[RMDB]
RNA sequence: GGGAACGACUCGAGUAGAGUCGAAAAGCUGGUCCGGAUUGGCCCCAGCGAACACUUGACGAACGGAUAGUCCCGUCUUGUGGAUUAGGACGUUCUAGGUCCGGUCUGGCCCCUAGUUCGUCCGAAACAUAUCCUCCCGAUUCGUCGGGAGGAUAUGAAAAGAAACAACAACAACAAC
Reactivity to DMS in 0.01 (KOAc 150mM, MgCl2 10mM, bicine 150mM(pH8.5), 24C), signal-to-noise 6, nucleotides 027 to 126: g010c000u010g000g010u040c030c010g010g010a190u070u020g000g010c100c130c010c030a020g030c030g010a140a100c050a020c020u010u020g000a000c020g020a100a050c050g000g000a130u040a130g010u000c200c020c000g000u000c010u000u000g020u010g010g000a140u020u010a110g000g000a000c000g010u000u000c000u000a020g000g000u040c020c030g000g020u050c110u040g000g000c160c160c000c010u000a020g010u000u000c000g010u000c000c010g000a050a090a170
Reactivity to 2A3 in 0.01 (KOAc 150mM, MgCl2 10mM, bicine 150mM(pH8.5), 24C), signal-to-noise 9, nucleotides 027 to 126: g000c000u010g020g020u130c030c040g120g120a290u120u300g120g020c080c040c010c010a010g010c000g020a050a010c010a010c010u010u020g020a020c020g020a160a020c020g030g110a140u130a210g100u220c020c030c000g010u000c010u010u030g010u020g010g050a060u050u150a080g000g010a000c000g000u000u000c000u010a000g000g010u020c020c020g060g120u120c180u210g080g000c040c050c000c000u000a000g010u000u000c000g000u000c000c000g000a000a010a000